[RMDB]
RNA sequence: GGGAACGACUCGAGUAGAGUCGAAAAGGCACAAGAGGAAUACGCAGGACUGCCAGAUUGGCCUCUAUGAUCAAAUGGCUGCGUGCGUGGGACAGUUCCACCAAGGGAGUGUGGACUCACAGGUUGACGGUGAGGAGUAUUUCGAUACUCCUCACCGAAAAGAAACAACAACAACAAC
Reactivity to DMS in 0.01 (KOAc 150mM, MgCl2 10mM, bicine 150mM(pH8.5), 24C), signal-to-noise 1, nucleotides 027 to 126: g000g020c020a050c100a030a040g050a040g040g010a200a110u030a060c070g000c010a050g000g020a130c040u000g000c010c010a020g000a160u000u000g030g000c000c030u020c130u000a120u000g000a000u030c030a040a010a100u000g000g010c010u000g000c110g000u000g000c000g040u000g010g020g000a130c140a100g000u000u000c000c010a070c060c080a170a120g040g020g000a120g000u000g000u000g010g000a080c050u000c060a060c110a070g000g020u000u000g000a180
Reactivity to 2A3 in 0.01 (KOAc 150mM, MgCl2 10mM, bicine 150mM(pH8.5), 24C), signal-to-noise 1, nucleotides 027 to 126: g070g000c010a020c000a050a090g030a030g100g030a120a060u050a070c000g050c000a000g060g100a230c040u030g000c010c010a040g060a300u070u090g030g000c020c000u090c050u100a220u130g020a050u040c010a010a000a070u050g000g000c010u000g000c080g160u020g020c000g030u000g010g050g010a020c020a080g030u060u050c000c000a010c000c010a040a010g120g060g000a130g050u060g010u080g010g030a010c000u020c010a070c000a000g060g090u110u090g010a070
This 177-nucleotide RNA was probed chemically with DMS and 2A3. The DMS profile rests on 1,112 reads. Conditions: 150 mM KOAc, 10 mM MgCl2 and 150 mM bicine (pH 8.5), 24 C. Reactivities are given for positions 27 through 126. 2A3 adducts were read by reverse transcription with SuperScript II with manganese. DMS adducts were read by reverse transcription with MarathonRT.